Annotation: The record gives the reactivity of an RNA of 207 nucleotides to 2A3 and DMS.

[RMDB]
RNA sequence: GGGAACGACUCGAGUAGAGUCGAAAAACUGCUGACUCUGGAGGAGAAGACAUUUCCAGAAGAUAUGUGCUACCCAGAUCAAGGUGGUGUCUGUCAGGGCACAUGUGUAGGAGGUGGUCCCUACGCACAAGGCGAAGAUGCCAGGAUGCUCUCAUUGGCUUAUGCACCUAUUCGUAGGUGCAUAAGCAAAAGAAACAACAACAACAAC
Reactivity to 2A3 in 0.01 (KOAc 150mM, MgCl2 10mM, bicine 150mM(pH8.5), 24C), signal-to-noise 3, nucleotides 027 to 156: a000c080u120g000c060u060g030a030c030u040c010u020g010g030a010g020g060a050g020a130a000g040a030c040a060u070u070u020c020c010a020g010a100a050g040a080u100a040u130g040u030g020c020u060a070c000c000c000a020g020a090u130c110a100a060g050g000u050g010g020u020g080u030c040u050g130u060c060a040g010g020g060c020a000c040a060u030g050u000g020u020a000g030g020a020g000g020u040g010g010u170c000c000c000u020a020c020g020c000a020c000a090a100g030g000c030g070a090a050g040a080u250g020c010c000a000g090g030a050u030g030c010u020c010u000c020a100u160u190g060
Reactivity to DMS in 0.01 (KOAc 150mM, MgCl2 10mM, bicine 150mM(pH8.5), 24C), signal-to-noise 1, nucleotides 027 to 156: a070c030u010g020c010u000g020a140c050u010c020u000g010g020a100g000g010a090g020a090a080g000a080c060a070u000u030u000c020c030a170g020a110a160g020a070u000a100u000g010u000g020c040u000a170c010c060c000a150g000a080u000c080a070a120g000g040u000g030g030u000g010u000c050u010g000u000c070a110g020g030g010c000a050c010a060u010g050u000g060u000a050g030g040a050g010g060u010g010g010u020c020c000c010u010a050c000g060c070a040c080a070a110g040g040c050g020a060a130g020a110u010g030c000c000a160g010g020a110u000g030c020u010c000u010c030a200u020u010g010
Values cover nucleotides 27 to 156. It was measured as part of the RMDB library OK3TST. Conditions: 150 mM KOAc, 10 mM MgCl2 and 150 mM bicine (pH 8.5), 24 C. High 2A3 reactivity points to a flexible backbone, as in loops and unpaired stretches.